Chemical mapping of a 177-nucleotide RNA with DMS and 2A3. DMS adducts were read by reverse transcription with MarathonRT. It was measured as part of the RMDB library OK2TRN.

RNA sequence: GGGAACGACUCGAGUAGAGUCGAAAAAGAAACGGGAAACACCUCCAACUACAGCAAAUACGGGAGUAUCGGCGACGAAGCGUGUUUCCGUGAUUGCCACUGACAGAGAUAGAGCCUAUUUUUUGAACGUCCAUACUGAUUUCGAUCAGUAUGGACGAAAAGAAACAACAACAACAAC
Reactivity to DMS in 0.01 (KOAc 150mM, MgCl2 10mM, bicine 150mM(pH8.5), 24C), signal-to-noise 2, nucleotides 027 to 126: a060g000a090a080a060c070g030g010g000a030a010a020c030a030c010c010u000c010c040a140a150c120u020a100c230a300g000c010a020a090a050u010a030c040g010g040g020a150g020u000a010u030c300g000g000c020g020a110c190g020a030a030g010c090g010u000g000u000u000u010c010c000g010u000g010a090u000u000g000c010c020a110c110u000g010a060c140a080g020a050g000a080u000a080g000a090g000c060c040u000a010u000u000u000u000u000u000g010a060a170
Reactivity to 2A3 in 0.01 (KOAc 150mM, MgCl2 10mM, bicine 150mM(pH8.5), 24C), signal-to-noise 1, nucleotides 027 to 126: a000g050a030a080a010c040g110g030g000a000a000a000c010a030c010c000u000c010c010a120a050c050u210a060c050a060g000c030a030a170a000u060a040c030g000g000g110a150g020u000a020u040c050g030g000c030g110a070c070g050a090a000g040c060g080u000g000u030u010u030c000c000g000u000g000a120u040u120g040c000c010a060c050u080g060a030c030a080g070a020g020a090u120a050g030a020g070c030c030u070a180u100u070u030u030u010u080g070a150a010